[RMDB]
RNA sequence: GGGAACGACUCGAGUAGAGUCGAAAAGGCCGAAAGCAUCGUGCGCUACGUCGCCUGAGGCAACUCGCGGUCAGAAUUCGGCGAUCGCGUGCUCGAGGCGUUGGGCCAGCCAGGCCUCGGCGUGCGCAGUAGCAGUGCUUUUCGAAGCACUGCUACUAAAAGAAACAACAACAACAAC
Reactivity to DMS in 0.01 (KOAc 150mM, MgCl2 10mM, bicine 150mM(pH8.5), 24C), signal-to-noise 3, nucleotides 027 to 126: g000g010c000c000g050a040a080a100g020c130a040u000c070g040u020g000c070g000c030u010a080c250g020u020c050g000c000c020u010g010a050g000g000c080a220a140c070u000c050g030c020g000g000u010c010a080g000a130a160u020u000c080g010g010c020g000a050u030c030g000c040g010u000g000c030u020c010g020a040g000g000c010g000u030u000g000g000g010c110c140a090g000c110c070a080g000g000c000c000u010c000g000g020c020g010u010g000c010g010c150
Reactivity to 2A3 in 0.01 (KOAc 150mM, MgCl2 10mM, bicine 150mM(pH8.5), 24C), signal-to-noise 5, nucleotides 027 to 126: g130g000c020c010g050a050a080a010g130c050a100u100c060g070u080g040c070g010c060u100a030c050g110u100c020g000c030c040u110g030a060g020g020c040a070a050c020u020c030g000c010g000g000u040c010a020g110a120a240u160u090c010g050g000c030g040a040u050c040g010c020g020u050g010c020u030c060g080a030g010g000c020g020u100u110g020g010g000c110c020a030g160c050c030a040g030g000c000c000u010c030g000g010c040g010u020g000c010g000c020
Record summary:
Chemical mapping of a 177-nucleotide RNA with DMS and 2A3. The RNA was probed in 150 mM KOAc, 10 mM MgCl2 and 150 mM bicine (pH 8.5) at 24 C. DMS adducts were read by reverse transcription with MarathonRT. For 2A3 the reverse transcriptase was SuperScript II with manganese.